[RMDB]
RNA sequence: GGGAACGACUCGAGUAGAGUCGAAAAGAUAUGGACAAGGGAACUACUCGAAGAGGUGCGUUUGACGUCCAUACGGUCGGAAACGACCGUAUGGACCGAGCACCCUUCGAGCCCUUGUCCUAAGUCAUCUCUUACUUAUCUUCGGAUAAGUAAGAGAAAAAGAAACAACAACAACAAC
Reactivity to 2A3 in 0.01 (KOAc 150mM, MgCl2 10mM, bicine 150mM(pH8.5), 24C), signal-to-noise 2, nucleotides 027 to 126: g020a000u020a020u120g000g010a000c010a010a010g070g010g010a090a060c090u220a060c000u300c010g010a000a000g210a240g000g020u010g010c030g090u080u200u300g200a170c080g010u020c000c000a000u000a000c010g010g040u000c010g000g000a000a030a080c020g010a000c000c000g010u010a000u000g000g030a000c000c000g010a010g000c010a000c010c000c000u010u000c010g000a000g010c010c000c000u000u000g000u000c000c000u010a000a010g000u010c010a090
Reactivity to DMS in 0.01 (KOAc 150mM, MgCl2 10mM, bicine 150mM(pH8.5), 24C), signal-to-noise 4, nucleotides 027 to 126: g000a040u000a290u010g000g000a020c010a010a020g000g000g010a100a010c020u020a300c000u000c000g010a020a000g000a180g030g020u000g000c000g010u010u020u010g010a210c300g020u000c010c010a010u000a000c010g000g000u000c000g000g000a070a040a170c010g010a010c000c020g030u000a000u000g000g000a000c000c050g000a120g000c000a010c000c000c000u000u000c000g000a000g000c000c000c000u000u000g010u000c000c000u010a000a060g000u000c030a210